[RMDB]
Conditions: 150 mM KOAc, 10 mM MgCl2 and 150 mM bicine (pH 8.5), 24 C. The record gives the reactivity of an RNA of 207 nucleotides to 2A3 and DMS. Reactivities are given for positions 27 through 156. For DMS, 4,522 sequencing reads were counted.
RNA sequence: GGGAACGACUCGAGUAGAGUCGAAAACGGGUGCAUCCCAAGGCUGUGCGUGUGUGCGUGUGUGUGUGUGUAGGAGUGUGUCUAUGUGUGCAAGUAUGUAUGAGUCUAUGUGUGAUUCAUGUGUGUAUGUGUGCACUUGUCUAUGCAUGGAUGUAUGCGCCAAGAAUGUAUUCGUACAUUCUUGGCGAAAAGAAACAACAACAACAAC
Reactivity to 2A3 in 0.01 (KOAc 150mM, MgCl2 10mM, bicine 150mM(pH8.5), 24C), signal-to-noise 3, nucleotides 027 to 156: c050g040g010g030u070g060c000a060u060c000c000c020a020a050g080g000c040u020g020u060g040c040g010u040g000u010g020u040g030c050g010u020g000u010g000u000g010u000g010u010g000u000g030u050a040g010g050a020g020u090g000u030g050u040c040u050a080u060g050u000g010u020g020c020a030a040g050u020a050u060g060u000a030u050g050a020g040u010c030u020a110u090g130u050g020u080g110a030u030u050c060a040u030g040u000g010u020g030u060a010u100g110u040g010u020g010c010a010c000u000u000g030u010c040u060a070u050g040c000a020u060g040g000a030u040g010u130a070u180g020
Reactivity to DMS in 0.01 (KOAc 150mM, MgCl2 10mM, bicine 150mM(pH8.5), 24C), signal-to-noise 1, nucleotides 027 to 156: c070g000g030g020u000g050c110a170u010c010c010c030a130a200g020g030c010u000g030u010g010c050g040u010g020u010g000u010g000c030g030u000g010u000g020u010g040u010g030u020g040u060g000u000a050g010g010a090g010u000g010u010g020u000c030u010a080u010g050u000g000u000g030c000a010a100g020u000a040u030g030u000a040u000g000a110g010u000c010u000a080u010g010u000g060u000g000a090u000u000c030a040u010g000u010g020u000g040u000a070u000g020u010g000u010g030c030a040c030u000u020g000u020c040u000a110u010g010c060a080u000g010g030a070u000g030u000a090u000g020